[RMDB]
RNA sequence: GGGAACGACUCGAGUAGAGUCGAAAAAGGCGGCUUGAGCACACUCACUGGACCCACCUGGCCCUGCAGCCCAGCCCUGGCCCCGGCUGCUGUGGUGCUGAGACCCUCCCCACCCGCCUGCAGCAGGCCACUCCCCUAGAUUCGUCUAGGGGAGUGGAAAAGAAACAACAACAACAAC
Reactivity to DMS in 0.01 (KOAc 150mM, MgCl2 10mM, bicine 150mM(pH8.5), 24C), signal-to-noise 2, nucleotides 027 to 126: a060g000g000c040g020g000c080u000u020g010a100g000c060a090c100a110c030u000c030a070c060u010g000g000a110c060c030c040a060c090c050u000g030g000c010c010c020u000g000c060a040g010c080c060c140a100g010c030c020c040u000g010g000c000c040c050c160g000g000c020u000g010c010u000g000u010g030g020u000g000c010u000g010a120g000a210c060c020c060u010c010c000c000c010a080c100c010c030g000c020c000u000g000c090a030g000c030a080g030g000
Source information: Structure probing data (DMS) for a 177-nucleotide construct. It was measured as part of the RMDB library OK2TRN.